[RMDB]
RNA sequence: GGGAACGACUCGAGUAGAGUCGAAAAGGGGUCCACUCGGGCCUAUUGUCAGCGAGUACUGAAGCCUCCACGGUACAUCGCUUGGAUUUAUAGGUCUCUAGCGUGGUGGACGGAGGCACCCAAAACUCUCUGCUCUACUUCGGUAGAGCAGAGAGAAUCUAUUGAUGGUGUUCGCACCAUCAAUAGAAAAAGAAACAACAACAACAAC
Reactivity to 2A3 in 0.01 (KOAc 150mM, MgCl2 10mM, bicine 150mM(pH8.5), 24C), signal-to-noise 3, nucleotides 027 to 156: g060g010g010g010u010c010c000a010c020u080c040g030g030g000c000c010u040a050u060u300g210u070c000a000g010c000g000a010g010u000a000c010u020g020a100a010g020c000c030u000c000c020a040c020g000g000u010a050c060a300u020c010g000c020u030u120g050g000a020u000u300u120a050u100a010g000g010u000c020u000c040u160a070g110c100g220u300g040g000u010g000g040a000c000g000g000a000g000g000c000a030c000c000c010a010a090a120a140c000u000c000u000c020u000g000c020u000c000u010a010c000u030u040c260g040g000u000a000g010a000g030c000a000g000a000g000a000g000a000a000
Reactivity to DMS in 0.01 (KOAc 150mM, MgCl2 10mM, bicine 150mM(pH8.5), 24C), signal-to-noise 2, nucleotides 027 to 156: g000g010g030g030u000c000c010a020c040u000c050g000g050g010c010c020u000a010u010u000g020u010c040a080g020c020g010a110g040u000a040c010u000g020a050a160g000c030c000u000c020c000a300c010g020g000u010a000c000a140u000c000g000c010u000u000g090g000a140u000u010u010a050u000a040g030g030u000c000u000c050u000a160g020c130g010u010g030g040u000g010g010a080c040g030g000a040g050g030c010a100c020c010c010a070a090a110a180c000u000c000u000c000u000g010c020u000c000u000a000c000u000u010c300g080g010u000a000g000a000g000c000a000g010a010g000a020g010a020a050